Annotation
Chemical mapping of a 177-nucleotide RNA with DMS and 2A3. Conditions: 150 mM KOAc, 10 mM MgCl2 and 150 mM bicine (pH 8.5), 24 C. For 2A3 the reverse transcriptase was SuperScript II with manganese. It was measured as part of the RMDB library OK2TST. Values cover nucleotides 27 to 126. Reactivities are rounded to 0.1 and cut off at 0 and 3.
[RMDB]
RNA sequence: GGGAACGACUCGAGUAGAGUCGAAAAGCGAAAGCAGGUGGUGGGGCGCCGACGGUUCACGUCGGGCUAGGUAGCGGGUCGCUCGGCGAGCACGCUCAGUCGCCUGAUUGCCUCGUCGAGGGUGUCGCACAAUGGAAUCAUUCGUGAUUCCAUUGUGAAAAGAAACAACAACAACAAC
Reactivity to DMS in 0.01 (KOAc 150mM, MgCl2 10mM, bicine 150mM(pH8.5), 24C), signal-to-noise 9, nucleotides 027 to 126: g010c040g000a080a080a130g020c040a080g010g010u000g010g010u010g000g000g010g020c060g010c010c000g010a010c010g010g010u010u010c240a110c020g020u000c000g010g000g010c060u000a060g010g000u000a080g010c070g000g000g010u000c060g010c010u000c040g010g000c010g000a030g010c100a100c150g000c130u000c030a050g010u000c190g010c220c020u000g000a040u010u000g000c280c010u000c020g010u000c020g010a040g000g000g010u000g010u000c080g010
Reactivity to 2A3 in 0.01 (KOAc 150mM, MgCl2 10mM, bicine 150mM(pH8.5), 24C), signal-to-noise 7, nucleotides 027 to 126: g020c020g040a100a010a000g050c050a030g040g050u070g020g130u120g010g050g020g000c090g030c030c000g010a010c000g040g020u250u300c190a070c140g010u010c010g020g010g000c020u030a030g010g050u060a010g010c070g010g000g030u040c030g030c090u020c010g020g000c010g000a010g000c040a030c090g050c010u010c010a030g120u150c030g060c080c010u020g010a050u040u100g000c000c000u020c010g030u010c010g000a040g010g010g010u090g050u050c050g000